[RMDB]
RNA sequence: GGGAACGACUCGAGUAGAGUCGAAAAGACGUCCGACCCGAGGAUUUCCACCCCGACAACGUCGAAACGCUGUUCAGGCGGGGGGACCGUCCCGAACCGUGAGGCUGUCGGCUCGAGCGGCAGAUGCACUCCAGCAGUAUUUCGAUACUGCUGGAGUAAAAGAAACAACAACAACAAC
Reactivity to DMS in 0.01 (KOAc 150mM, MgCl2 10mM, bicine 150mM(pH8.5), 24C), signal-to-noise 3, nucleotides 027 to 126: g000a060c110g030u010c020c020g000a140c020c020c000g020a060g010g010a150u000u000u000c030c010a130c080c050c000c020g020a040c040a030a040c110g040u000c120g010a090a150a090c030g020c130u010g010u000u000c040a050g000g000c020g000g010g000g010g000g000a210c050c010g000u000c010c000c010g000a030a030c020c030g010u010g000a190g010g000c030u000g020u010c030g010g000c030u000c040g000a040g020c000g000g010c060a140g000a130u000g010c140
Reactivity to 2A3 in 0.01 (KOAc 150mM, MgCl2 10mM, bicine 150mM(pH8.5), 24C), signal-to-noise 2, nucleotides 027 to 126: g010a010c030g090u000c030c030g110a190c040c000c030g000a020g020g040a020u030u060u000c030c020a080c020c000c000c000g030a040c020a190a010c040g060u050c010g040a100a110a030c010g000c060u090g010u110u050c010a030g050g000c020g000g000g020g020g090g090a030c000c020g050u100c030c020c010g030a010a010c030c020g060u040g030a010g090g000c020u070g010u000c000g060g030c000u000c030g040a020g000c030g000g000c070a030g030a090u180g060c050